[RMDB]
RNA sequence: GGGAACGACUCGAGUAGAGUCGAAAAGAGCAGAUCGACCAACGAGUCGGAGCCGGUUUCCGUCGCGGUCUCGGCGGCUGUGGCGAGCACAUCCCGCGGCAACUCGUCCGGGUCGGUUGCUUCGAGCUCUCCACAUAGUAUUCGUACUAUGUGGAGAAAAAGAAACAACAACAACAAC
Reactivity to 2A3 in 0.01 (KOAc 150mM, MgCl2 10mM, bicine 150mM(pH8.5), 24C), signal-to-noise 9, nucleotides 027 to 126: g040a000g000c060a030g030a230u020c000g010a010c000c000a010a010c010g010a000g030u080c110g090g010a020g010c010c010g020g000u050u080u020c030c010g020u030c020g010c030g030g020u010c060u090c150g300g030c160g010g000c020u020g010u030g020g020c040g020a030g050c090a040c000a130u110c020c030c020g060c010g030g020c020a020a020c010u000c010g040u020c030c110g120g000g010u010c000g000g000u000u000g000c000u030u060c020g020a030g030c010
Reactivity to DMS in 0.01 (KOAc 150mM, MgCl2 10mM, bicine 150mM(pH8.5), 24C), signal-to-noise 4, nucleotides 027 to 126: g000a060g000c020a020g000a030u010c000g010a020c000c000a220a030c010g000a010g000u010c100g000g010a230g020c050c110g000g030u030u040u010c070c000g020u000c020g010c030g000g000u000c050u030c210g000g030c120g000g010c030u000g000u010g000g010c050g000a100g000c200a120c110a120u010c000c000c090g000c000g000g010c050a220a040c010u000c010g000u000c070c150g000g040g010u010c020g000g020u000u000g010c010u000u020c050g000a140g000c180
About this RNA: Conditions: 150 mM KOAc, 10 mM MgCl2 and 150 mM bicine (pH 8.5), 24 C. Structure probing data (2A3 and DMS) for a 177-nucleotide construct. Source: RMDB library OK1LIB, as collected in RNAgym. For 2A3 the reverse transcriptase was SuperScript II with manganese.